[RMDB]
RNA sequence: GGGAACGACUCGAGUAGAGUCGAAAAAGAAAAAGAAAAAUAGUGUCUUGGAGCGCGCGGAGUAAACAUAUAUGGUUCAUAUAUGUCCGUACGCACGUAAAAAAAGCGAGAAAAGAAAGAAAAGAAAAGUAUUAUUACCUUUCGAGGUAAUAAUACUAAAAGAAACAACAACAACAAC
Reactivity to DMS in 0.01 (KOAc 150mM, MgCl2 10mM, bicine 150mM(pH8.5), 24C), signal-to-noise 2, nucleotides 027 to 126: a090g020a080a040a060a120a080g010a000a070a080a050a090u050a030g000u030g000u000c010u000u000g000g000a070g010c040g040c100g050c000g000g000a280g000u010a190a130a090c010a000u000a000u010a000u020g040g000u040u080c020a000u020a000u000a000u000g000u000c010c010g000u000a050c000g040c000a090c060g000u020a020a000a040a040a050a040a060g020c070g030a070g000a070a000a060a060g020a060a080a060g000a020a050a010a160g000a050a020a060
Reactivity to 2A3 in 0.01 (KOAc 150mM, MgCl2 10mM, bicine 150mM(pH8.5), 24C), signal-to-noise 3, nucleotides 027 to 126: a000g130a020a040a040a000a000g140a010a140a020a040a010u190a060g110u070g070u040c020u060u120g060g030a070g010c010g010c000g000c000g000g020a010g020u190a030a100a000c000a000u010a010u030a010u010g280g120u300u300c030a000u000a000u000a000u000g010u000c000c000g000u030a030c000g000c010a010c020g020u030a000a080a080a060a000a000a000g070c050g030a080g080a110a090a010a000g090a060a060a000g050a010a140a050a000g090a010a070a010

This 177-nucleotide RNA was probed chemically with DMS and 2A3. Reactivities are rounded to 0.1 and cut off at 0 and 3. 2A3 is a SHAPE reagent: it acylates the 2'-hydroxyl of flexible nucleotides of all four kinds.